[RMDB]
About this RNA: The record gives the reactivity of an RNA of 170 nucleotides to 2A3 and DMS. For 2A3 the reverse transcriptase was SuperScript II with manganese.
RNA sequence: GGGAACGACUCGAGUAGAGUCGAAAAGCAUGGUAAUGGUAGUAUGAUAGAGGAUAUUGAUUAUGUACCCCUAAAAUCUGCAGUCUGUAUUACAGCUUGUAAUUUAGGGGGCGCUGUUUGUAGGAAGUGACCCCAAGCUUCGGCUUGGGGAAAAGAAACAACAACAACAAC
Reactivity to 2A3 in 0.01 (KOAc 150mM, MgCl2 10mM, bicine 150mM(pH8.5), 24C), signal-to-noise 5, nucleotides 027 to 129: g000c000a010u060g040g000u070a110a040u120g040g000u000a010g030u000a000u040g050a040u010a030g040a000g040g040a020u000a010u150u140g150a100u150u210a070u150g120u300a300c040c000c000c010u000a000a030a030a060u060c070u000g020c020a000g040u000c000u020g020u050a240u150u300a120c010a000g030c070u010u080g010u060a050a040u010u000u020a000g000g000g020g010g010c000g000c000u130g070u070u110u140g050u060a050g040g130a080a120g020u040g070a040
Reactivity to DMS in 0.01 (KOAc 150mM, MgCl2 10mM, bicine 150mM(pH8.5), 24C), signal-to-noise 4, nucleotides 027 to 129: g040c050a060u030g030g050u030a020a070u000g060g000u030a030g020u020a050u030g030a090u070a080g010a090g010g000a100u050a080u080u030g020a120u000u000a100u030g040u050a110c010c040c000c000u000a080a000a010a060u020c160u020g010c010a030g030u010c070u000g000u040a150u030u060a090c040a040g030c000u010u030g030u020a040a010u010u020u030a050g000g000g000g000g000c080g070c070u030g030u040u060u020g060u000a120g020g020a100a090g010u030g000a180
It was measured as part of the RMDB library 15KLIB.